[RMDB]
RNA sequence: GGGAACGACUCGAGUAGAGUCGAAAAAUGGAUCGAUCUAGCAUGGUACUAGUACGCUAGUGAUAGUACAGAGUACAGUACUAGGUACUCAUGGAUCCGAUCGAGUACGUACUCGUACAUCAUCAUACUGGAAGUCAGGGUUCGCCCUGACUUCCAGAAAAGAAACAACAACAACAAC
Reactivity to DMS in 0.01 (KOAc 150mM, MgCl2 10mM, bicine 150mM(pH8.5), 24C), signal-to-noise 1, nucleotides 027 to 126: a080u020g010g010a060u000c020g010a090u010c050u000a070g000c120a150u010g000g000u000a030c000u010a020g010u000a020c020g000c100u020a050g000u000g010a120u000a050g020u020a110c090a060g010a060g020u000a050c070a110g000u000a000c020u000a030g000g010u000a010c050u040c070a130u030g000g000a020u000c040c020g030a020u000c090g000a090g060u000a040c040g030u010a070c150u000c010g000u010a000c030a150u000c020a040u000c160a050u000a070
Reactivity to 2A3 in 0.01 (KOAc 150mM, MgCl2 10mM, bicine 150mM(pH8.5), 24C), signal-to-noise 2, nucleotides 027 to 126: a010u210g080g000a030u020c010g020a000u050c050u130a030g160c010a050u180g010g020u070a020c040u000a020g010u000a010c060g000c090u080a110g110u090g170a110u120a120g010u000a010c080a130g080a030g060u020a050c030a040g010u000a000c000u010a020g190g000u040a010c040u030c110a040u060g060g010a040u020c190c000g000a020u060c000g000a010g050u040a000c070g000u050a110c020u030c070g030u050a020c010a060u150c000a070u030c000a020u080a160